An RNA of 177 nucleotides, treated with 2A3 and DMS and read out base by base. Conditions: 150 mM KOAc, 10 mM MgCl2 and 150 mM bicine (pH 8.5), 24 C. As a SHAPE reagent, 2A3 marks flexible, mostly unpaired nucleotides at the ribose 2'-OH. DMS adducts were read by reverse transcription with MarathonRT.
RNA sequence: GGGAACGACUCGAGUAGAGUCGAAAAAUACUAAAAGAUAUGGAGCUUGAACUACUGUGCAUGGCGCGUUGAAAUCGGAAACGAUGGAGCGUCUGUGAUGCAGCAAGCUCCUAAGUCCAGAACAAAACUUACUGCAUUAGUUCGCUAAUGCAGUAAGAAAAGAAACAACAACAACAAC
Reactivity to 2A3 in 0.01 (KOAc 150mM, MgCl2 10mM, bicine 150mM(pH8.5), 24C), signal-to-noise 2, nucleotides 027 to 126: a000u180a050c060u130a200a070a000a030g130a050u060a010u160g000g010a010g020c010u000u030g010a060a040c020u090a020c020u300g020u030g040c030a030u070g000g010c010g010c000g210u290u060g070a070a060a000u020c010g020g000a050a030a000c000g000a010u040g000g040a040g000c000g030u040c000u000g000u000g020a190u080g000c000a010g000c010a010a000g000c000u030c000c000u000a000a000g000u000c000c010a060g100a160a030c100a080a100a030a000
Reactivity to DMS in 0.01 (KOAc 150mM, MgCl2 10mM, bicine 150mM(pH8.5), 24C), signal-to-noise 3, nucleotides 027 to 126: a080u010a140c050u010a060a090a130a100g000a060u010a300u010g000g000a060g000c000u000u000g020a090a050c050u010a300c030u000g010u000g000c010a020u000g030g010c010g010c010g000u000u030g000a060a100a020u000c000g010g000a110a070a140c010g000a040u000g000g000a130g010c000g010u000c000u010g030u010g000a160u000g010c000a000g000c020a030a020g000c000u000c000c010u000a000a080g000u000c000c040a140g010a110a060c190a060a060a080a100